The data come from the RNA Mapping Database (RMDB), library TTRDEL. Chemical mapping of a 177-nucleotide RNA with 2A3 and DMS.
[RMDB]
RNA sequence: GGGAACGACUCGAGUAGAGUCGAAAAGAUAUGGAUGAUCUCCGAUAAGCAGCAGUCGGAAACGACUGGCUGCUUUUGACGGAGAUCCUAAGUCAAAUCGGAACGUUCCUUCGGGAACGUUCCGAAACAUUUAUACGGAGUUCGCUCCGUAUAAAUGAAAAGAAACAACAACAACAAC
Reactivity to 2A3 in 0.01 (KOAc 150mM, MgCl2 10mM, bicine 150mM(pH8.5), 24C), signal-to-noise 3, nucleotides 027 to 126: g040a060u190a080u300g080g010a060u100g000a010u050c000u020c000c010g010a060u030a050a010g000c000a000g000c000a000g000u000c010g010g070a150a060a090c020g010a010c010u020g120g010c000u000g010c030u000u010u010u010g030a010c020g000g010a000g010a000u010c000c000u020a060a030g060u030c040a050a030a210u040c000g000g000a000a000c000g020u000u010c030c000u030u070c300g030g000g000a000a000c000g000u000u020c000c010g000a000a000a000
Reactivity to DMS in 0.01 (KOAc 150mM, MgCl2 10mM, bicine 150mM(pH8.5), 24C), signal-to-noise 4, nucleotides 027 to 126: g010a100u000a160u010g010g000a140u010g000a030u000c010u000c000c000g010a150u000a010a010g010c010a010g020c000a020g010u000c000g010g000a120a090a200c010g000a010c000u000g010g020c000u000g010c000u000u000u000u010g010a200c090g000g010a020g000a010u000c000c030u000a070a290g010u000c060a050a100a120u000c000g010g020a020a020c000g010u000u000c000c000u000u020c170g010g010g010a010a010c000g010u000u000c010c000g000a000a030a130
Source information
For 2A3 the reverse transcriptase was SuperScript II with manganese. The DMS profile rests on 8,893 reads.